Chemical mapping of a 207-nucleotide RNA with DMS and 2A3. Reactivities are given for positions 27 through 156. The 2A3 profile rests on 2,550 reads. The RNA was probed in 150 mM KOAc, 10 mM MgCl2 and 150 mM bicine (pH 8.5) at 24 C.
[RMDB]
RNA sequence: GGGAACGACUCGAGUAGAGUCGAAAAGAACUUUGGCCGGCUCGGAAUAGAAUCAGGGGGUGCAAACUUCCCACUGGCAGAAAGGAUUAUAGCAAAUGCGUACCCUAUUGCAAUACAGCCCGGCCAACAUAGACUACUCUAUUCGUAGAGUAGUCAAACUUAGUUGACUAUUCGUAGUCAACUAAGUAAAAGAAACAACAACAACAAC
Reactivity to DMS in 0.01 (KOAc 150mM, MgCl2 10mM, bicine 150mM(pH8.5), 24C), signal-to-noise 2, nucleotides 027 to 156: g010a060a120c030u010u000u000g000g020c020c000g000g000c010u020c080g050g000a150a150u000a060g010a080a110u000c090a110g000g010g010g030g030u020g000c040a070a130a110c080u000u010c020c000c020a140c100u000g000g050c080a080g000a000a060a060g020g010a080u030u010a120u010a110g040c060a060a110a140u000g000c050g020u000a150c000c040c010u000a150u000u000g000c020a070a160u000a090c080a080g000c100c030c000g000g000c020c000a010a020c050a070u010a090g000a080c000u000a010c010u000c000u000a030u000u000c260g040u000a040g000a020g050u000a000g020u010c000a000a050
Reactivity to 2A3 in 0.01 (KOAc 150mM, MgCl2 10mM, bicine 150mM(pH8.5), 24C), signal-to-noise 4, nucleotides 027 to 156: g020a070a030c020u070u010u030g000g000c000c000g020g000c020u040c090g060g020a050a090u160a120g080a070a040u160c060a060g000g000g000g000g000u040g030c040a090a080a060c010u080u030c000c010c010a040c030u020g030g000c020a010g060a000a070a020g060g000a040u110u050a060u170a090g060c050a020a110a110u100g000c020g020u050a080c000c010c000u040a100u010u100g030c030a040a060u070a160c030a040g000c020c020c000g010g000c010c000a000a000c010a000u070a020g010a000c000u000a000c010u000c000u000a010u060u050c120g070u090a000g000a000g010u000a000g000u000c000a000a000